The record gives the reactivity of an RNA of 177 nucleotides to DMS and 2A3. For DMS the reverse transcriptase was MarathonRT. For 2A3 the reverse transcriptase was SuperScript II with manganese. The reactions ran in a buffer of 150 mM KOAc, 10 mM MgCl2 and 150 mM bicine (pH 8.5), at 24 C.
RNA sequence: GGGAACGACUCGAGUAGAGUCGAAAAAGGAUCGCGCUAGACAUGUCGUACACUAGCUGCGAUCGGUACUCUAGUCUAGCAUGAGCGUACAUCUCGCAGUACCGUACUCAUGCAUGUCUAGGAUCUCGCUCCAUUGUAAAUUCGUUUACAAUGGAGCAAAAGAAACAACAACAACAAC
Reactivity to DMS in 0.01 (KOAc 150mM, MgCl2 10mM, bicine 150mM(pH8.5), 24C), signal-to-noise 8, nucleotides 027 to 126: a120g010g000a020u000c020g040c020g020c000u000a010g000a140c180a100u010g010u000c250g010u010a200c150a300c020u000a020g000c010u010g040c000g010a010u000c010g010g010u010a050c100u000c010u010a040g000u000c020u000a300g000c010a010u000g000a020g010c070g000u000a010c010a060u010c070u020c230g000c130a070g010u000a020c130c170g030u000a100c010u000c010a020u000g010c000a100u000g000u000c000u000a020g010g010a120u000c040u000c050
Reactivity to 2A3 in 0.01 (KOAc 150mM, MgCl2 10mM, bicine 150mM(pH8.5), 24C), signal-to-noise 9, nucleotides 027 to 126: a000g160g010a000u000c010g000c010g010c030u020a000g070a100c070a180u240g080u300c120g090u190a050c050a020c060u020a010g010c080u110g000c070g000a000u000c000g000g030u110a110c020u010c000u020a010g020u000c020u030a040g000c010a010u020g010a000g010c010g000u000a010c010a110u070c110u070c160g040c110a010g000u010a010c030c090g040u060a050c010u000c010a000u020g010c000a010u030g000u000c000u000a010g020g030a070u010c040u010c050